[RMDB]
Conditions: 150 mM KOAc, 10 mM MgCl2 and 150 mM bicine (pH 8.5), 24 C. Structure probing data (DMS) for a 177-nucleotide construct. Values cover nucleotides 27 to 126.

RNA sequence: GGGAACGACUCGAGUAGAGUCGAAAAGAUAUGGAAGGAUUCGGUUACAACAGCGCUCGAACUACUCGCAGAGGGUCGGAAACGACCCGAUCGAGCGAGCGACAUGUAACCGAAUCCUUCCUAAGUCCGAAAUAAUAAAGUUCGCUUUAUUAUUUCGAAAAGAAACAACAACAACAAC
Reactivity to DMS in 0.01 (KOAc 150mM, MgCl2 10mM, bicine 150mM(pH8.5), 24C), signal-to-noise 2, nucleotides 027 to 126: g010a080u020a300u000g000g010a010a020g030g000a020u030u000c000g020g020u000u000a000c010a020a100c300a280g010c010g020c000u000c000g010a050a040c040u020a300c010u010c000g020c240a050g020a300g000g000g040u000c000g010g000a050a100a280c000g010a010c000c000c000g000a060u000c010g000a000g010c040g000a000g010c000g020a030c060a160u010g020u000a010a010c000c000g000a000a000u000c000c000u000u000c000c000u000a010a100g000u010c030